The record gives the reactivity of an RNA of 177 nucleotides to DMS and 2A3. Reactivities are given for positions 27 through 126.
RNA sequence: GGGAACGACUCGAGUAGAGUCGAAAAGAUAUGGAUUUCUUCUCUAGCGUGAUCUUUGAUCUAUGUGAAACUACAUCGGAAACGAUGUAGGAGUAUGCAUAGGGAGAUUCGGGAGAAAUCCUAAGUCCUCCUCUUACUGGUUCGCCAGUAAGAGGAGAAAAGAAACAACAACAACAAC
Reactivity to DMS in 0.01 (KOAc 150mM, MgCl2 10mM, bicine 150mM(pH8.5), 24C), signal-to-noise 2, nucleotides 027 to 126: g010a080u000a270u050g010g000a030u000u000u030c000u000u000c000u000c150u040a160g040c300g010u020g010a000u000c000u000u020u010g000a040u030c010u000a000u020g000u000g030a270a210a200c000u000a010c000a010u000c010g000g000a140a120a190c000g020a010u000g000u000a000g010g040a060g050u000a070u020g000c000a010u000a020g000g000g000a030g010a010u000u000c030g000g020g010a010g010a020a000a010u000c000c000u000a040a230g000u000c030
Reactivity to 2A3 in 0.01 (KOAc 150mM, MgCl2 10mM, bicine 150mM(pH8.5), 24C), signal-to-noise 2, nucleotides 027 to 126: g050a050u140a070u240g000g000a020u020u040u000c010u090u000c100u000c150u180a120g140c090g300u260g070a020u050c010u300u290u040g110a060u010c010u020a000u000g020u000g030a040a010a030c000u000a010c000a000u010c010g020g010a080a080a010c000g020a000u010g000u000a010g000g000a010g000u010a030u300g000c020a000u010a010g000g030g010a020g000a010u060u080c040g020g000g020a010g000a010a000a010u010c000c010u010a110a030g060u010c000